RNA sequence: GGGAACGACUCGAGUAGAGUCGAAAAUCCACUAUGAAUCUAGUCACUAAAUAAACACAAUUAGCUACUGUGUGUAAUAGUGAGUGUUGAUAACACAAAAUAAUAGUCUAGUUUUGGAAGAUUAUACGCGCCCUUGCUCCGUUCGCGGAGCAAGGAAGUAUGUACGCAGCUUCGGCUGCGUACAUACAAAAGAAACAACAACAACAAC
Reactivity to DMS in 0.01 (KOAc 150mM, MgCl2 10mM, bicine 150mM(pH8.5), 24C), signal-to-noise 1, nucleotides 027 to 156: u000c020c000a050c150u000a120u000g000a080a160u040c120u010a130g000u010c050a020c000u010a010a030a050u020a090a130a050c000a030c000a030a000u000u000a300g010c300u000a100c020u000g000u010g000u000g010u000a050a300u000a030g020u020g000a100g010u000g020u000u000g010a220u020a110a190c070a070c050a100a010a050a160u020a090a070u000a120g000u000c010u000a080g020u000u000u000u010g050g000a150a060g030a110u000u000a110u010a040c120g010c130g000c080c010c000u000u000g020c020u000c000c000g070u010u000c300g030c040g000g040a010g020c010a020a000g010g040a000a020
Reactivity to 2A3 in 0.01 (KOAc 150mM, MgCl2 10mM, bicine 150mM(pH8.5), 24C), signal-to-noise 2, nucleotides 027 to 156: u010c020c010a030c060u180a180u270g100a090a030u040c060u040a050g120u040c000a000c000u000a040a020a080u030a020a060a000c020a000c000a020a070u110u070a070g120c050u110a040c050u030g000u000g010u000g000u030a000a020u010a030g000u000g020a060g020u000g010u010u100g110a150u180a210a010c020a000c000a020a050a050a050u240a070a110u020a040g020u030c010u020a050g090u030u040u140u160g090g020a080a030g010a090u130u110a080u100a130c120g070c010g060c070c010c000u000u000g000c000u000c000c000g010u000u020c090g010c000g110g000a010g000c000a000a000g000g000a000a000